[RMDB]
RNA sequence: GGGAACGACUCGAGUAGAGUCGAAAAGCACUAGAGGGCGUAAAGGCUGGGUGUAACCCAACUCUAGGUGUGCUGAUUAGCGGGCUUGACUCCGUAACAAAUAGGCACUGGUGGUAAAAAGCAUCCCUGACCAUAUACAUCUUCGGAUGUAUAUGAAGUUAUGAAGAAUCUUCGGAUUCUUCAUAACAAAAGAAACAACAACAACAAC
Reactivity to 2A3 in 0.01 (KOAc 150mM, MgCl2 10mM, bicine 150mM(pH8.5), 24C), signal-to-noise 5, nucleotides 027 to 156: g010c010a010c030u010a000g000a020g020g020g020c040g070u140a130a120a000g160g000c020u010g000g020g000u040g050u060a040a040c000c000c000a000a000c000u000c010u020a040g070g030u030g020u010g020c000u010g010a110u060u060a030g010c010g010g030g010c060u120u170g010a110c020u010c050c000g020u030a010a020c020a030a100a030u120a060g030g000c010a000c050u040g060g030u050g040g040u120a090a100a030a020a000g020c010a040u030c020c000c000u020g050a030c020c000a000u010a000u000a000c000a000u000c000u030u050c120g080g000a010u000g000u000a000u000a000u000g000a020a020
Reactivity to DMS in 0.01 (KOAc 150mM, MgCl2 10mM, bicine 150mM(pH8.5), 24C), signal-to-noise 4, nucleotides 027 to 156: g020c020a040c010u000a080g030a060g010g020g010c030g020u000a090a110a120g030g000c030u000g010g000g030u000g020u000a050a300c020c010c010a030a020c010u000c030u000a080g010g010u010g010u000g020c020u000g000a120u000u000a170g030c020g010g000g040c030u010u010g060a150c110u010c000c000g030u000a080a110c110a060a080a090u000a140g010g000c020a020c030u000g010g020u000g010g000u010a030a060a080a080a080g010c030a100u000c020c010c000u000g010a170c220c000a010u000a020u000a010c000a000u000c000u010u000c300g060g000a050u000g000u000a010u000a020u010g000a030a090